[RMDB]
An RNA of 177 nucleotides, treated with DMS and 2A3 and read out base by base.
RNA sequence: GGGAACGACUCGAGUAGAGUCGAAAAGGGUGAAAAAUGAGAGUGGCAUUCGUUAAGCGCCCAAAACAUACGCCGUGAGUACUAAUGCGACAUUAGCGGCGACAUUAGGAAAGCGAGAAUGCAUUGACUAUGUGAAGCUUUUCGAAGCUUCACAUAGAAAAGAAACAACAACAACAAC
Reactivity to DMS in 0.01 (KOAc 150mM, MgCl2 10mM, bicine 150mM(pH8.5), 24C), signal-to-noise 4, nucleotides 027 to 126: g000g000g030u000g010a030a040a070a030a090u050g000a110g020a100g010u020g000g020c010a050u000u010c010g020u030u020a070a090g000c060g010c000c030c040a060a050a080a090c080a100u020a160c060g010c010c010g000u000g000a060g000u020a060c020u000a000a000u010g000c040g000a040c050a110u030u040a110g000c210g000g000c020g010a050c020a000u000u000a010g000g000a130a090a270g020c000g020a070g000a020a000u010g000c080a120u010u000g000a300
Reactivity to 2A3 in 0.01 (KOAc 150mM, MgCl2 10mM, bicine 150mM(pH8.5), 24C), signal-to-noise 4, nucleotides 027 to 126: g060g020g020u110g130a120a030a010a020a060u280g050a120g010a050g130u110g040g000c000a010u000u010c020g030u070u150a110a000g020c000g040c000c010c030a000a100a030a010c070a040u170a050c030g020c030c000g000u000g000a000g010u000a000c000u010a000a000u010g010c000g040a050c090a150u230u230a060g020c110g080g000c000g090a120c010a000u000u000a010g000g000a010a000a000g010c010g000a020g060a080a020u040g010c010a030u010u140g020a040

Record summary:
For 2A3, 3,216 sequencing reads were counted. As a SHAPE reagent, 2A3 marks flexible, mostly unpaired nucleotides at the ribose 2'-OH. For DMS the reverse transcriptase was MarathonRT. Source: RMDB library OK1LIB, as collected in RNAgym. 2A3 adducts were read by reverse transcription with SuperScript II with manganese.